RNA sequence: GGGAACGACUCGAGUAGAGUCGAAAAUGCAAUAUGAUUCAUAAACAUUGUCAAUUCAGGUCGUUGAUAAGGACCAUAAAAAGCAUUUGUAUAUUGGUGCUGUUUAGCGAAUUGUUUUAGAUGGAACGACCGCUGUGUAGUUCGCUACACAGCGGUCAAAAGAAACAACAACAACAAC
Reactivity to 2A3 in 0.01 (KOAc 150mM, MgCl2 10mM, bicine 150mM(pH8.5), 24C), signal-to-noise 1, nucleotides 027 to 126: u270g000c040a000a000u000a100u190g040a000u110u060c010a010u130a300a090a030c000a000u020u000g080u020c000a000a080u160u050c060a050g080g060u040c050g160u010u080g120a060u110a050a060g100g000a000c000c000a070u150a030a080a020a000a100g040c000a100u080u080u000g300u060a100u000a020u260u080g050g000u010g040c000u000g000u000u040u040a000g040c000g000a000a000u000u000g020u010u040u000u000a220g050a100u030g070g000a010a010c000
Reactivity to DMS in 0.01 (KOAc 150mM, MgCl2 10mM, bicine 150mM(pH8.5), 24C), signal-to-noise 1, nucleotides 027 to 126: u010g030c070a070a280u040a090u070g000a030u000u000c030a060u040a070a080a040c270a170u000u000g000u000c020a000a080u040u000c020a060g080g000u000c070g020u000u000g000a050u020a210a070g000g000a000c000c040a050u000a000a020a110a030a040g000c040a000u000u000u000g010u000a050u000a080u000u040g000g000u010g000c000u000g030u000u000u000a030g060c300g000a000a050u020u000g010u000u000u000u000a110g040a220u000g000g000a000a070c250